Structure probing data (DMS and 2A3) for a 207-nucleotide construct. For DMS the reverse transcriptase was MarathonRT. The 2A3 profile rests on 1,494 reads. It was measured as part of the RMDB library RNAMAK. In probing experiments dimethyl sulfate is read out at A N1 and C N3, which are open when not base-paired.

RNA sequence: GGGAACGACUCGAGUAGAGUCGAAAACUAUCAAUAUUCGUAUUGAUAGAAAAAGCGUACUACUAGGUGGGGGAGCUUGCAUAGUCCCAAAUAGGACUAUGAGCUUUGAUCCGUAACAUCCUAGUAUCGCAAAAAAGGGCGUCUUCGGACGCCCUAACCUAUUGUCAAUGUUCGCAUUGACAAUAGGAAAAGAAACAACAACAACAAC
Reactivity to DMS in 0.01 (KOAc 150mM, MgCl2 10mM, bicine 150mM(pH8.5), 24C), signal-to-noise 1, nucleotides 027 to 156: c010u000a010u010c010a000a000u010a000u000u010c230g050u000a020u010u010g000a010u020a010g010a040a040a070a160a150g020c030g000u020a070c240u000a030c010u010a040g010g020u010g000g020g010g030g010a030g020c020u010u000g010c020a030u000a020g000u000c000c010c010a020a140a170u020a070g000g000a080c000u000a010u000g020a020g000c020u010u000u000g000a070u000c010c010g000u000a050a090c120a060u010c000c000u010a030g020u010a010u010c060g000c020a010a040a050a060a100a010g000g030g040c000g000u010c000u000u000c290g030g020a010c000g020c000c000c000u000a000a020
Reactivity to 2A3 in 0.01 (KOAc 150mM, MgCl2 10mM, bicine 150mM(pH8.5), 24C), signal-to-noise 2, nucleotides 027 to 156: c000u000a000u010c000a020a000u010a040u040u090c090g040u010a000u020u010g020a010u010a000g100a140a040a000a030a000g010c000g030u090a050c000u000a000c000u000a030g040g000u020g020g000g000g020g000a000g000c010u030u120g030c030a000u000a000g020u060c000c040c060a130a160a170u240a040g010g010a010c000u000a000u000g010a000g000c000u170u230u090g040a010u000c000c020g010u000a050a050c040a210u160c030c000u000a000g010u000a010u070c010g000c030a050a080a030a000a000a060g000g010g000c000g010u010c000u000u030c190g160g000a000c000g000c010c000c000u000a000a000